This 177-nucleotide RNA was probed chemically with 2A3 and DMS.

RNA sequence: GGGAACGACUCGAGUAGAGUCGAAAAAUAAGUUACGGUAAGCUGCUAUAUGCUUUGACCCGUAAAUUUCCGAAUGGGGCAACCCGGCUAUGUGAAGCAUAGUCACCGAGAGGAGUUAACCCGGAGACAAUAAGUUGUCGUUCGCGACAACUUAUUGAAAAGAAACAACAACAACAAC
Reactivity to 2A3 in 0.01 (KOAc 150mM, MgCl2 10mM, bicine 150mM(pH8.5), 24C), signal-to-noise 1, nucleotides 027 to 126: a000u100a150a030g040u000u000a010c000g000g000u010a030a010g000c020u060g040c050u180a130u100a030u300g010c000u070u060u120g050a040c000c000c040g000u000a060a000a040u020u030u000c010c000g030a100a060u110g000g000g000g000c010a000a040c000c010c070g000g000c000u000a000u030g040u060g290a100a020g080c000a000u000a010g000u020c020a020c070c130g080a090g000a040g130g020a110g060u040u010a030a020c030c000c000g050g030a020g010a020
Reactivity to DMS in 0.01 (KOAc 150mM, MgCl2 10mM, bicine 150mM(pH8.5), 24C), signal-to-noise 2, nucleotides 027 to 126: a080u010a110a100g010u010u000a000c010g000g010u010a050a080g010c010u000g000c150u000a160u000a060u020g000c010u020u000u010g010a130c300c000c000g000u000a020a040a060u000u000u000c010c000g000a070a150u010g010g010g000g010c100a030a060c030c020c040g010g020c000u000a000u010g000u000g010a170a170g000c010a010u000a010g010u000c030a100c120c120g000a110g010a130g010g000a080g010u000u000a090a120c020c000c000g000g010a180g010a210
It was measured as part of the RMDB library RFMREP. Values cover nucleotides 27 to 126. High 2A3 reactivity points to a flexible backbone, as in loops and unpaired stretches. DMS adducts were read by reverse transcription with MarathonRT. 2A3 adducts were read by reverse transcription with SuperScript II with manganese.